Chemical mapping of a 207-nucleotide RNA with 2A3. The data come from the RNA Mapping Database (RMDB), library ARCHII. The reactions ran in a buffer of 150 mM KOAc, 10 mM MgCl2 and 150 mM bicine (pH 8.5), at 24 C.
RNA sequence: GGGAACGACUCGAGUAGAGUCGAAAAACAUUUUAGAGGAUAGUUUUAGUUAGCCCUGUUUACGGGAGUAAUUAUUACGAAAUUUAAUAGUAAACUAAACUUGUAGAAGCUUAUGGUCAUUAUGAUUUCGGACACGAGUUCGACUCUCGUCAUCUCCGUAAAUAUUGCGGUUCGCCGCAAUAUUUACAAAAGAAACAACAACAACAAC
Reactivity to 2A3 in 0.01 (KOAc 150mM, MgCl2 10mM, bicine 150mM(pH8.5), 24C), signal-to-noise 1, nucleotides 027 to 156: a000c040a050u080u110u170u220a110g060a060g120g080a160u080a100g030u060u030u030u060a000g000u010u040a040g010c010c040c000u050g000u020u000u030a010c010g010g000g000a000g040u000a060a150u070u110a050u060u110a030c000g000a090a040a000u150u100u050a050a010u100a020g060u040a090a000a000c000u010a030a030a030c000u030u060g030u030a100g050a300a040g030c000u010u050a040u190g040g000u030c040a050u000u110a000u060g040a010u000u030u040c080g000g030a000c000a010c160g090a060g040u030u050c010g010a010c010u000c000u000c030g010u020c010a040u000c030u060c010c010
2A3 adducts were read by reverse transcription with SuperScript II with manganese.